Structure probing data (2A3 and DMS) for a 170-nucleotide construct. 2A3 adducts were read by reverse transcription with SuperScript II with manganese.
RNA sequence: GGGAACGACUCGAGUAGAGUCGAAAAAAGUAUGGAUAAGUUGCGCCGUGUGGAUUGGAAAUCAACCCUACGGUUGUUACUUAUGUUAUGCACAACUAUGGUAUUGUUGUCUUCUGUGUAUCACUUGGCCGAGGGACGUUCGCGUCCCUCAAAAGAAACAACAACAACAAC
Reactivity to 2A3 in 0.01 (KOAc 150mM, MgCl2 10mM, bicine 150mM(pH8.5), 24C), signal-to-noise 2, nucleotides 027 to 129: a000a000g000u030a010u070g000g000a030u000a020a020g000u000u000g000c000g160c000c000g030u080g070u120g070g010a180u030u040g020g060a250a000a000u300c010a000a000c000c000c000u000a000c000g000g100u050u210g040u000u000a000c000u000u000a000u000g070u060u010a080u100g010c010a000c030a120a060c080u060a000u140g090g080u130a160u230u020g000u000u030g000u000c050u050u000c000u020g030u000g040u060a040u170c110a010c000u150u130g000g000c000c000
Reactivity to DMS in 0.01 (KOAc 150mM, MgCl2 10mM, bicine 150mM(pH8.5), 24C), signal-to-noise 2, nucleotides 027 to 129: a000a000g050u040a040u000g000g010a030u000a000a000g080u070u150g040c000g000c000c000g010u040g040u070g000g000a010u060u010g000g080a190a150a150u070c030a000a060c040c030c000u000a020c020g000g000u010u090g040u010u080a060c000u000u000a000u010g000u060u000a050u050g020c080a000c110a140a160c040u050a080u020g030g030u000a190u020u030g050u230u000g000u040c040u000u000c020u070g010u000g040u080a150u070c190a090c090u000u000g060g000c040c080